[RMDB]
RNA sequence: GGGAACGACUCGAGUAGAGUCGAAAACUUUUACUGGGCCACCUCGGCCCAUCGGGACCUGUCAGUCCUUGACCUCCCUCAGGCCCCUAGGCUGGCCAGGUCGCCUCAGUGCCACGCCUCCCUGGCCCGGUAGCGAACAUUUCGAUGUUCGCUACCGAAAAGAAACAACAACAACAAC
Reactivity to DMS in 0.01 (KOAc 150mM, MgCl2 10mM, bicine 150mM(pH8.5), 24C), signal-to-noise 1, nucleotides 027 to 126: c040u020u020u000u010a060c160u000g000g000g030c030c000a120c220c140u030c220g010g070c000c010c010a000u000c100g000g050g030a030c030c000u000g020u020c130a080g020u000c030c030u030u000g020a120c030c030u010c030c050c040u000c050a080g080g000c000c010c070c180u000a050g000g000c050u020g000g000c030c100a030g000g000u000c130g030c020c000u020c130a110g000u000g060c050c050a040c200g000c040c010u030c040c000c000u000g020g010c040c100
Chemical mapping of a 177-nucleotide RNA with DMS.
Reactivities are given for positions 27 through 126.
The reactions ran in a buffer of 150 mM KOAc, 10 mM MgCl2 and 150 mM bicine (pH 8.5), at 24 C.
For DMS the reverse transcriptase was MarathonRT.
The data come from the RNA Mapping Database (RMDB), library OK2TRN.